RNA sequence: GGGAACGACUCGAGUAGAGUCGAAAAACGAGUCCGUACGCGGACUCGAAGGGCCCCAGAAGACCAAGGGGCCCAAACCUACCACUCAUUAGAUGCAUGGAAAUUACUAGGUGAUACGUCACCUAGAACACGCUUUUAAGCUUCGGCUUAAAAGCAACACUAAUCUCCUCUUCGGAGGAGAUUAGUGAAAAGAAACAACAACAACAAC
Reactivity to 2A3 in 0.01 (KOAc 150mM, MgCl2 10mM, bicine 150mM(pH8.5), 24C), signal-to-noise 2, nucleotides 027 to 156: a000c000g000a000g010u010c040c000g000u090a040c260g000c000g050g000a000c000u000c010g000a000a000g000g000g000c000c020c010c000a150g120a300a090g070a070c170c090a150a070g000g000g000g030c000c000c000a020a000a000c000c000u020a040c000c000a030c040u090c010a040u090u190a110g070a090u170g070c050a030u110g080g020a000a040a090u120u070a090c000u000a000g000g010u020g000a000u010a060c130g100u020c010a000c000c010u000a000g000a010a010c050a000c190g000c040u000u020u000u000a000a010g010c040u010u070c160g050g000c000u000u030a000a000a010a000g000c010a000a000